[RMDB]
Source information
An RNA of 207 nucleotides, treated with DMS and 2A3 and read out base by base. Source: RMDB library OK3TST, as collected in RNAgym. The 2A3 profile rests on 2,962 reads.

RNA sequence: GGGAACGACUCGAGUAGAGUCGAAAAUUUAUUUGACUAUGUCAAGAAUACAGAGCUCUCCUAGGAUUAAUUAGUGGUUGACAGUAUUACUAAUCUUUACCAGUUGUGGCAAGAAGGGUGGUUUUAUUUGAGUACACGAUGAGUAGAGCUUUUUACACUACUACUAAUCAUUCGUGAUUAGUAGUAGAAAAGAAACAACAACAACAAC
Reactivity to DMS in 0.01 (KOAc 150mM, MgCl2 10mM, bicine 150mM(pH8.5), 24C), signal-to-noise 4, nucleotides 027 to 156: u000u010u000a080u020u000u010g010a050c020u000a070u010g020u000c020a050a100g010a130a110u000a100c070a140g010a130g020c020u000c040u000c040c030u020a110g010g010a140u010u010a070a100u000u000a080g040u000g030g030u000u000g020a120c140a090g020u000a050u010u000a050c030u000a030a050u000c040u000u000u000a050c030c030a110g010u000u010g020u010g010g010c020a040a090g010a060a070g000g020g030u000g020g000u000u000u000u000a080u000u010u000g010a150g020u000a060c040a050c050g010a090u000g010a130g020u000a060g000a090g020c010u000u020u000u000u020a080c100a150
Reactivity to 2A3 in 0.01 (KOAc 150mM, MgCl2 10mM, bicine 150mM(pH8.5), 24C), signal-to-noise 3, nucleotides 027 to 156: u080u070u050a130u030u050u040g030a030c050u100a100u300g000u010c010a030a030g040a120a050u160a130c050a030g050a010g030c020u010c010u030c030c010u060a040g070g000a050u080u140a130a090u030u100a130g040u010g040g030u040u050g050a060c040a030g050u050a020u060u030a030c010u030a070a150u040c040u050u070u060a070c000c010a020g030u090u040g070u140g060g010c020a030a040g060a020a040g050g010g030u060g030g000u040u040u010u050a070u010u090u060g050a020g010u030a040c010a000c040g050a030u070g010a020g020u040a010g010a000g000c000u030u020u030u040u050a080c100a010